[RMDB]
RNA sequence: GGGAACGACUCGAGUAGAGUCGAAAAUGGCUCCCCCUGGUCUCCUGAAUCUGUGCUAAAGUAAAUCUGAUUUGUACCUCUGCAUUUGGAGAGCUGCUUUCUCUUUUAAAUGUAUUCAGCAGAUCAGCUACUCAUAUUUCUUCGGAAAUAUGAGUAGAAAAGAAACAACAACAACAAC
Reactivity to 2A3 in 0.01 (KOAc 150mM, MgCl2 10mM, bicine 150mM(pH8.5), 24C), signal-to-noise 2, nucleotides 027 to 126: u170g140g010c040u060c000c000c010c000c010u020g010g010u010c000u010c010c000u020g020a020a020u070c100u080g040u020g000c020u070a100a040a050g020u030a060a180a130u100c020u010g040a080u030u040u080g000u030a030c010c000u000c020u020g020c010a020u000u010u050g000g000a010g000a000g020c050u090g070c010u110u220u050c000u000c000u000u030u020u300a000a040a010u000g010u020a020u020u030c010a000g000c000a000g000a020u000c000a000g000
Reactivity to DMS in 0.01 (KOAc 150mM, MgCl2 10mM, bicine 150mM(pH8.5), 24C), signal-to-noise 4, nucleotides 027 to 126: u010g020g000c080u000c010c010c010c110c000u000g010g010u000c020u000c130c010u000g010a070a050u000c090u010g000u010g010c080u020a180a110a090g010u010a070a100a130u020c030u000g010a160u010u010u000g000u000a060c090c030u010c080u000g000c000a050u000u000u000g000g000a030g010a030g010c300u010g010c160u000u010u010c000u010c000u000u000u000u010a010a020a020u000g000u000a030u000u010c040a070g000c110a010g010a010u000c010a010g010